[RMDB]
RNA sequence: GGGAACGACUCGAGUAGAGUCGAAAAGAUAUGGACUACCCACCAACCGAACUACUUCUAAGUAUCGGAAACGAUACGAUGAAGCGGUUGAGGUCCUAAGUCAAAGUGGAUCGUUCGCGAUCCACAAGCUCUCUUGUAGGUUCGCCUACAAGAGAGCAAAAGAAACAACAACAACAAC
Reactivity to DMS in 0.01 (KOAc 150mM, MgCl2 10mM, bicine 150mM(pH8.5), 24C), signal-to-noise 2, nucleotides 027 to 126: g020a080u000a280u000g010g010a020c000u010a150c020c010c030a300c170c000a010a020c030c000g000a070a070c090u030a300c000u000u000c000u000a160a260g010u000a010u000c030g010g000a130a050a220c000g030a000u000a000c000g000a130u000g000a000a020g000c000g020g000u000u000g030a080g020g000u000c010c000u000a060a080g000u000c090a040a040a160g010u000g000g000a060u010c020g040u000u020c220g020c010g000a000u000c000c000a000c030a050a050
Reactivity to 2A3 in 0.01 (KOAc 150mM, MgCl2 10mM, bicine 150mM(pH8.5), 24C), signal-to-noise 1, nucleotides 027 to 126: g050a060u160a100u230g010g010a010c020u150a220c030c010c050a040c000c000a000a000c000c000g060a110a080c120u280a030c010u300u000c000u030a120a040g020u010a000u010c020g030g000a010a070a000c010g000a000u000a010c010g050a040u150g000a000a010g000c020g010g000u000u000g000a030g050g010u000c000c010u020a180a040g120u150c080a000a040a130g000u010g000g020a000u000c000g050u150u130c300g050c030g200a030u010c000c010a000c000a000a000
Chemical mapping of a 177-nucleotide RNA with DMS and 2A3. Conditions: 150 mM KOAc, 10 mM MgCl2 and 150 mM bicine (pH 8.5), 24 C. Values cover nucleotides 27 to 126. It was measured as part of the RMDB library TTRDEL.